Source: RMDB library TTRDEL, as collected in RNAgym. Chemical mapping of a 177-nucleotide RNA with 2A3 and DMS.
RNA sequence: GGGAACGACUCGAGUAGAGUCGAAAAGAUAUGGACCUUUCGAGAGUCCCCCACAUCGGAAACGAUGUACUCGAUGAGAUGGGUCCUAAGUCAAAGUUAUUUAGUUGGUUCGCCAACUAAAUAACAAUCAUGUGAGUAUGUUCGCAUACUCACAUGAAAAAGAAACAACAACAACAAC
Reactivity to 2A3 in 0.01 (KOAc 150mM, MgCl2 10mM, bicine 150mM(pH8.5), 24C), signal-to-noise 2, nucleotides 027 to 126: g020a050u120a070u180g000g000a000c020c000u110u060u060c120g090a120g030a100g300u300c040c000c030c000c000a020c010a020u000c000g000g000a060a060a010c010g000a010u030g020u030a030c000u000c060g180a190u130g050a080g040a090u120g060g000g000u000c010c000u030a090a020g000u020c050a120a000a060g020u000u000a010u020u010u000a000g000u000u020g000g040u010u100c180g050c060c000a010a000c000u000a030a000a000u000a000a000c010a010a030
Reactivity to DMS in 0.01 (KOAc 150mM, MgCl2 10mM, bicine 150mM(pH8.5), 24C), signal-to-noise 5, nucleotides 027 to 126: g000a060u000a300u000g000g010a020c010c000u000u000u000c000g000a090g010a190g010u010c030c010c000c030c060a140c000a010u010c010g010g000a140a080a190c010g010a010u000g010u000a080c010u000c010g000a120u010g000a170g000a060u000g000g010g000u000c000c000u000a050a110g020u010c070a090a110a120g010u000u000a000u000u000u000a010g000u000u000g000g000u000u010c250g020c010c000a000a010c000u010a000a000a000u000a000a010c010a100a120
The RNA was probed in 150 mM KOAc, 10 mM MgCl2 and 150 mM bicine (pH 8.5) at 24 C.
For 2A3, 2,123 sequencing reads were counted.